This 177-nucleotide RNA was probed chemically with DMS and 2A3.
Reactivities are given for positions 27 through 126.
High DMS reactivity at an A or C suggests that its Watson-Crick edge is free.
The 2A3 profile rests on 165,270 reads.

RNA sequence: GGGAACGACUCGAGUAGAGUCGAAAACACUAGCUUUCGAAGCUGUAACUGACUUUCGAAGCUGUAAUGCUUACAGCAAUGUAAGCGUGAUACCUAGCAGAGUCAGUGAUACCUAGCAGAGCUAGAAGACAUUGAUUAAUUUCGAUUGGUCAAUGUCAAAAGAAACAACAACAACAAC
Reactivity to DMS in 0.01 (KOAc 150mM, MgCl2 10mM, bicine 150mM(pH8.5), 24C), signal-to-noise 9, nucleotides 027 to 126: c080a250c010u000a000g000c000u000u010u010c070g010a120a120g020c140u010g010u010a110a030c000u000g010a010c000u000u000u010c060g010a120a090g010c140u010g010u010a120a020u010g000c000u000u000a000c010a010g000c280a090a080u000g010u000a000a000g000c000g020u000g000a100u040a040c190c050u000a200g000c140a150g000a010g000u000c000a000g000u000g010a100u040a030c200c050u010a160g010c160a120g000a020g000c000u000a000g000a100a090
Reactivity to 2A3 in 0.01 (KOAc 150mM, MgCl2 10mM, bicine 150mM(pH8.5), 24C), signal-to-noise 9, nucleotides 027 to 126: c030a000c000u000a000g010c000u080u100u110c100g210a180a020g010c030u030g010u010a040a020c000u000g010a000c000u040u110u100c130g200a200a020g000c010u000g010u020a020a020u040g000c000u000u000a000c000a010g020c050a060a150u030g000u000a000a000g000c000g000u010g020a040u070a100c060c090u060a020g000c030a010g010a000g020u000c000a000g000u010g010a030u040a080c020c040u020a010g000c040a000g010a000g000c000u000a000g010a030a010